[RMDB]
RNA sequence: GGGAACGACUCGAGUAGAGUCGAAAAUUGUAUUACCUAACUCAGUAUCUAUUGAUACGUCUAUACUCAGUGAAUCACUGAGUUCAUAGAACCUCUUCUACACGUCGACAAGAUUAUUUCUUGUGUUGUAGCGGAUUAAUUUCGAUUAAUCCGCUACAAAAGAAACAACAACAACAAC
Reactivity to DMS in 0.01 (KOAc 150mM, MgCl2 10mM, bicine 150mM(pH8.5), 24C), signal-to-noise 1, nucleotides 027 to 126: u040u020g010u060a160u030u010a100c030c010u000a070a040c140u000c130a180g000u010a050u000c050u020a100u000u010g010a050u020a030c010g010u000c010u030a020u000a040c000u000c000a000g010u000g020a240a190u050c040a030c000u000g000a030g000u010u000c170a000u000a010g000a020a220c080c050u000c030u000u000c020u000a060c110a050c090g000u010c080g010a050c000a030a020g000a050u010u000a050u000u000u010c010u010u000g000u000g020u000u000
Reactivity to 2A3 in 0.01 (KOAc 150mM, MgCl2 10mM, bicine 150mM(pH8.5), 24C), signal-to-noise 5, nucleotides 027 to 126: u100u060g070u070a100u080u120a110c010c030u050a110a090c010u020c170a040g000u010a040u010c020u030a240u120u300g000a010u000a040c020g030u000c010u000a030u010a030c010u010c000a010g000u000g160a300a180u280c040a040c000u000g000a000g000u000u090c030a020u000a010g020a020a030c030c030u060c030u090u030c040u090a050c070a000c140g080u060c030g120a000c000a000a020g010a050u050u070a130u090u250u000c030u000u010g020u000g040u010u040
This 177-nucleotide RNA was probed chemically with DMS and 2A3. The data come from the RNA Mapping Database (RMDB), libraries RFM100 and RFMREP. High 2A3 reactivity points to a flexible backbone, as in loops and unpaired stretches. Reactivities are given for positions 27 through 126. For DMS the reverse transcriptase was MarathonRT.